[RMDB]
RNA sequence: GGGAACGACUCGAGUAGAGUCGAAAAUUAAAAAGUUCGUAGUUUGACUUUGCCUGUUUAUUAGAUUCUAAAUAUUAUGUUUGGAAUCAAUUUAAGCAGAGAUUUGCAGAACAACACAACAUGCAUUAAACUGUGUGACAUUCGUGUCACACAGUUUAAAAGAAACAACAACAACAAC
Reactivity to 2A3 in 0.01 (KOAc 150mM, MgCl2 10mM, bicine 150mM(pH8.5), 24C), signal-to-noise 2, nucleotides 027 to 126: u140u100a050a000a000a030a000g040u040u030c060g010u050a110g070u050u050u060g060a070c030u000u040u010g020c020c000u030g000u000u000u030a090u020u020a060g000a000u050u000c000u040a000a020a020u280a100u300u210a250u300g030u010u000u000g000g010a000a000u000c000a000a020u000u010u010a040a000g000c010a000g080a040g090a300u030u000u120g000c040a010g010a080a050c010a060a000c010a010c000a160a080c030a080u050g000c000a000u000u000